Notes:
An RNA of 207 nucleotides, treated with DMS and 2A3 and read out base by base. The 2A3 profile rests on 1,501 reads. The RNA was probed in 150 mM KOAc, 10 mM MgCl2 and 150 mM bicine (pH 8.5) at 24 C. DMS adducts were read by reverse transcription with MarathonRT. It was measured as part of the RMDB library OK3TST.
RNA sequence: GGGAACGACUCGAGUAGAGUCGAAAAGAAAGAAGGCGUAAUCGCCGUGUACGAGCUCCACGAUCAAUGAUUUUCUCGCCCGCCGGCAUUGAUCGGACGUACCUCGGAUUGCCGCCUUACAAAGUUAAUACUAGAUUAAAUAAACCGUGCGGGCAAACCUAAUCCAUCAUUUCGAUGAUGGAUUAGGAAAAGAAACAACAACAACAAC
Reactivity to DMS in 0.01 (KOAc 150mM, MgCl2 10mM, bicine 150mM(pH8.5), 24C), signal-to-noise 1, nucleotides 027 to 156: g040a220a140a130g020a070a010g000g010c080g040u000a110a070u010c040g050c030c000g000u000g010u030a100c000g020a150g040c240u010c000c070a110c000g000a030u010c010a040a070u020g000a270u000u000u000u000c080u000c050g040c090c000c000g020c050c000g040g010c040a060u000u010g000a060u000c000g050g000a230c030g040u000a130c070c030u000c040g000g010a110u000u000g000c070c020g030c040c040u010u000a160c020a070a160a110g000u010u010a030a100u000a100c050u010a250g000a220u000u000a130a250a200u020a100a060a230c030c030g000u020g030c050g010g100g060c000a090a080a020
Reactivity to 2A3 in 0.01 (KOAc 150mM, MgCl2 10mM, bicine 150mM(pH8.5), 24C), signal-to-noise 2, nucleotides 027 to 156: g090a030a090a020g110a010a000g000g000c020g000u030a030a040u080c140g030c170c020g020u010g000u010a010c030g000a070g050c080u070c080c100a110c010g000a000u010c010a020a000u020g070a060u100u020u070u230c140u090c080g010c000c010c010g000c000c030g000g020c000a000u000u000g000a000u000c010g010g020a010c000g000u010a000c000c000u070c040g000g000a030u050u040g000c050c040g000c000c000u000u020a030c050a040a110a000g040u120u180a030a090u070a220c050u040a040g080a230u270u130a220a130a100u080a080a070a030c000c080g060u140g000c000g020g000g000c000a000a000a000